[RMDB]
RNA sequence: GGGAACGACUCGAGUAGAGUCGAAAAUAUGGGCAUUAAUAUUACAGGUUAUCAACAAGAUGCAGUUUAUCGUGCCUUAGGUCCUGAAAAUAUUACUAAAUUGUUUGAGUAUGCACAGAAAGCUCCAUUGCCAUUUUGUACUAAGAUUAUAACAAAGAUCUAACCAAUUCUUCGGAAUUGGUUAGAUAAAAGAAACAACAACAACAAC
Reactivity to 2A3 in 0.01 (KOAc 150mM, MgCl2 10mM, bicine 150mM(pH8.5), 24C), signal-to-noise 2, nucleotides 027 to 156: u120a010u060g030g000g020c010a040u030u130a070a000u060a040u070u100a010c060a000g030g070u170u230a110u120c040a050a110c010a120a000g050a080u120g010c010a010g010u250u030u040a150u170c030g000u050g010c000c000u020u020a040g030g040u040c010c000u000g000a060a030a050a000u090a050u070u060a040c080u120a030a110a090u170u130g050u050u120u010g010a010g000u070a040u110g010c040a030c040a070g140a030a010a040g030c020u060c020c020a060u050u080g030c030c000a020u080u080u080u060g040u070a060c000u020a000a040g040a160u230u230a080u200a110a000c000a000a010a150g110
Reactivity to DMS in 0.01 (KOAc 150mM, MgCl2 10mM, bicine 150mM(pH8.5), 24C), signal-to-noise 3, nucleotides 027 to 156: u010a120u000g000g020g030c040a050u000u000a020a050u000a020u010u000a300c030a010g000g040u000u000a140u000c030a080a080c040a040a040g000a060u010g020c040a200g010u000u010u000a040u010c040g000u000g000c010c110u000u000a130g010g000u000c010c010u000g010a080a080a070a070u000a010u000u010a140c080u000a080a110a130u010u000g010u000u010u020g010a110g020u000a080u000g020c040a060c060a080g010a090a090a110g000c020u010c040c070a040u020u000g020c010c010a100u000u000u000u010g020u000a100c010u000a050a100g000a160u000u000a050u000a050a110c060a060a060a190g000